[RMDB]
RNA sequence: GGGAACGACUCGAGUAGAGUCGAAAAACGCGAUCGAUUGAUGCGCUUUCUGCUCGUAUCGAACAAGCGGUAGAAGAGGUCAAAGGACUAGAAGUGGCGACCGGAAAUAUCGAAACCAUUUUGAAAACGUAAUCCAGCUGUUCGCAGCUGGAUUACGAAAAGAAACAACAACAACAAC
Reactivity to DMS in 0.01 (KOAc 150mM, MgCl2 10mM, bicine 150mM(pH8.5), 24C), signal-to-noise 1, nucleotides 027 to 126: a170c060g010c040g000a000u060c000g030a190u060u010g020a030u010g000c010g000c070u010u010u000c020u000g020c030u000c000g010u000a110u000c020g000a050a140c160a070a220g000c080g010g000u020a020g010a070a100g000a100g000g000u000c090a010a270a130g020g000a190c080u000a090g030a050a010g030u000g000g000c050g000a080c070c090g000g000a050a050a140u000a100u000c000g000a110a100a070c020c020a170u010u000u020u040g000a190a140a130a100
Reactivity to 2A3 in 0.01 (KOAc 150mM, MgCl2 10mM, bicine 150mM(pH8.5), 24C), signal-to-noise 1, nucleotides 027 to 126: a070c000g020c040g050a050u020c010g190a230u010u290g000a010u100g020c000g020c090u040u090u010c080u070g010c010u000c000g070u010a070u060c020g000a080a020c000a200a000g030c030g000g000u030a000g000a200a030g040a080g070g010u000c090a170a070a070g120g050a050c100u170a070g050a090a000g100u010g000g050c000g010a010c000c090g030g050a130a100a020u170a020u060c060g020a000a080a000c020c050a050u050u010u080u160g090a030a080a000a000